[RMDB]
RNA sequence: GGGAACGACUCGAGUAGAGUCGAAAAUAAAAAAUCGUCUGGCCGCCUCGUGCCUACGAUGGGCUAGGGAAAUGCCGUGACGAGACACGCACUGGGUGGCCAUUGCGUCUGCGGUAGAUCCGCCGAUAACCACAAGGACUUUCGAGUCCUUGUGGUUAAAAGAAACAACAACAACAAC
Reactivity to 2A3 in 0.01 (KOAc 150mM, MgCl2 10mM, bicine 150mM(pH8.5), 24C), signal-to-noise 3, nucleotides 027 to 126: u160a020a120a020a000a010a040u070c010g060u010c050u020g010g000c000c000g000c000c000u030c000g010u020g000c000c010u040a090c140g070a110u140g040g000g000c030u070a070g130g040g140a040a200a090u190g010c010c000g040u030g040a070c060g000a020g050a020c040a000c060g000c000a000c000u000g000g000g000u000g000g000c020c000a000u010u020g000c000g020u020c030u040g000c010g020g060u090a050g070a210u020c020c000g000c000c020g000a000u040
Reactivity to DMS in 0.01 (KOAc 150mM, MgCl2 10mM, bicine 150mM(pH8.5), 24C), signal-to-noise 2, nucleotides 027 to 126: u100a100a070a000a020a080a100u040c010g060u000c300u010g000g050c010c150g000c020c000u000c300g010u000g010c020c050u000a030c070g000a100u040g020g060g030c000u000a160g020g000g090a160a110a100u000g040c010c000g000u040g040a300c200g000a030g020a060c140a010c190g000c130a020c000u090g000g030g040u000g000g000c000c000a000u020u000g000c000g040u000c080u030g040c020g000g010u010a090g000a110u010c000c000g000c000c100g000a090u000
Annotation:
This 177-nucleotide RNA was probed chemically with 2A3 and DMS. For 2A3 the reverse transcriptase was SuperScript II with manganese. DMS adducts were read by reverse transcription with MarathonRT. For DMS, 1,408 sequencing reads were counted. It was measured as part of the RMDB library RFM100. The reactions ran in a buffer of 150 mM KOAc, 10 mM MgCl2 and 150 mM bicine (pH 8.5), at 24 C.